[RMDB]
RNA sequence: GGGAACGACUCGAGUAGAGUCGAAAAACUUGUAUAGGCGAUUAAUAAAUCUUCUGUAAAUGCUGUAAGAGGAUUACCCCUUGCGGUUUCAGCACUAGGCUGCUCUAGCGAUUAAUCAAUGCAUUUGUAACGGAAAGACAGUUCGCUGUCUUUCCAACGUGUAACUUCACUUCGGUGAAGUUACACGAAAAGAAACAACAACAACAAC
Reactivity to 2A3 in 0.01 (KOAc 150mM, MgCl2 10mM, bicine 150mM(pH8.5), 24C), signal-to-noise 1, nucleotides 027 to 156: a000c060u090u170g030u040a110u070a150g020g070c030g000a050u110u040a080a080u050a100a060a050u080c030u070u010c000u030g250u200a050a110a130u090g040c010u030g090u060a080a000g050a090g000g000a010u020u150a120c000c000c030c090u000u070g020c030g040g020u000u040u120c010a000g010c000a020c160u080a050g140g000c020u020g030c010u080c000u270a080g020c030g040a040u080u070a090a020u030c080a080a050u170g080c010a050u020u000u140g000u010a110a020c030g000g040a020a000a000g000a000c000a000g050u130u190c190g020c110u000g020u000c060u000u000u000c000c000a000a000